RNA sequence: GGGAACGACUCGAGUAGAGUCGAAAAGUAUGUUACGAUUAUGUGACUAGCCAUAAUCGAUGAAGGUACUCGACUUCAUCGUAACAUAGAAUUGUCAGUGCGUAGUGGCUAGUCACACUACGGCAGACUACACUCCUAGUCUGCCACUGACUAGGAGUGAAAAUUAGGGGUUCGCCCCUAAUUUUCAAAAAGAAACAACAACAACAAC
Reactivity to 2A3 in 0.01 (KOAc 150mM, MgCl2 10mM, bicine 150mM(pH8.5), 24C), signal-to-noise 7, nucleotides 027 to 156: g040u030a020u090g020u040u170a060c050g020a240u080u060a040u130g000u000g000a000c000u000a000g000c000c010a050u090a090a080u160c010g000a000u000g010a010a000g040g030u150a100c060u060c110g100a040c010u020u000c000a010u000c010g000u010a010a010c010a050u140a070g220a180a140u180u170g110u160c080a070g100u080g160c090g070u110a030g030u080g010g000c000u000a000g000u010c000a000c000a000c000u010a010c000g030g030c020a020g020a060c020u050a040c100a010c030u000c010c000u000a000g000u000c010u060g180c060c010a010c020u020g000a000c000u000a000g010g000a010g000
Reactivity to DMS in 0.01 (KOAc 150mM, MgCl2 10mM, bicine 150mM(pH8.5), 24C), signal-to-noise 3, nucleotides 027 to 156: g010u010a010u000g000u020u010a080c030g010a170u000u000a050u010g020u000g000a060c010u000a020g030c090c020a070u000a080a130u000c040g020a040u020g010a070a040g010g010u000a130c210u000c140g010a110c000u000u000c020a040u000c020g000u000a050a050c040a040u000a110g000a090a230u000u000g020u000c050a200g020u000g000c000g000u000a100g020u000g030g000c020u000a030g020u000c020a020c000a000c020u000a040c020g000g000c030a080g000a110c050u000a120c030a050c030u000c010c000u000a020g010u000c000u010g000c090c100a010c060u000g010a020c010u000a020g010g010a030g020
Source: RMDB library OK3TST, as collected in RNAgym.
An RNA of 207 nucleotides, treated with 2A3 and DMS and read out base by base.
The RNA was probed in 150 mM KOAc, 10 mM MgCl2 and 150 mM bicine (pH 8.5) at 24 C.
For 2A3, 5,358 sequencing reads were counted.
For 2A3 the reverse transcriptase was SuperScript II with manganese.